[RMDB]
RNA sequence: GGGAACGACUCGAGUAGAGUCGAAAACUUUUCAGGCACAGGCGGUGAACGUCACCGUGGCGUAUCAAACCUCAGCCGAACCGGCGAAAGUGGCUCAGGCCGACAACACCUUUGCUAAAGAAAGCGGGAGAAAGAUCAAAUUCGUUUGAUCUUUCUCAAAAGAAACAACAACAACAAC
Reactivity to DMS in 0.01 (KOAc 150mM, MgCl2 10mM, bicine 150mM(pH8.5), 24C), signal-to-noise 5, nucleotides 027 to 126: c050u020u000u000u000c040a280g010g000c030a060c110a080g010g010c030g020g020u010g000a100a100c080g010u000c030a120c150c140g010u000g000g000c040g010u000a090u010c070a100a130a100c080c060u000c110a120g010c020c010g000a070a110c090c030g010g020c030g000a040a100a110g000u000g000g000c020u000c090a060g000g020c030c050g010a040c090a060a070c070a100c040c020u000u000u010g000c000u000a040a140a160g000a030a070a070g020c060g000g010

Chemical mapping of a 177-nucleotide RNA with DMS. It was measured as part of the RMDB library OK2TRN.